[RMDB]
Conditions: 150 mM KOAc, 10 mM MgCl2 and 150 mM bicine (pH 8.5), 24 C. Chemical mapping of a 207-nucleotide RNA with 2A3. 2A3 adducts were read by reverse transcription with SuperScript II with manganese. Source: RMDB library M2RFPK, as collected in RNAgym. Values cover nucleotides 27 to 156.
RNA sequence: GGGAACGACUCGAGUAGAGUCGAAAAGCUUAAUAACCUGCGCUGAGCCCUUCUCCCCCAGCUUGCCUGUGUCCUAGGGAAUUGGAAGGUCAUCCUUCACAGGAUCGUGUGGAAGUCCGGCUCGGGGUCCAAACAUGGUAAUUCGUUACCAUGUUAACGUAACUGGGCUAUUCGUAGCCCAGUUACGAAAAGAAACAACAACAACAAC
Reactivity to 2A3 in 0.01 (KOAc 150mM, MgCl2 10mM, bicine 150mM(pH8.5), 24C), signal-to-noise 1, nucleotides 027 to 156: g000c010u220u220a090a040u140a110a140c030c030u120g020c070g080c020u040g030a010g010c030c020c000u070u100c030u080c000c000c000c000c030a010g000c020u060u100g040c010c000u040g020u010g000u040c070c010u010a030g000g050g030a110a110u100u060g000g050a040a060g060g000u110c020a120u080c010c000u030u020c030a030c010a060g040g000a060u030c000g020u030g010u020g070g000a030a030g020u020c010c000g000g010c010u000c000g030g000g020g000u050c030c050a000a030a000c040a000u000g000g000u030a050a000u030u020c070g060u050u000a000c020c000a000u010g000u010u020a070a030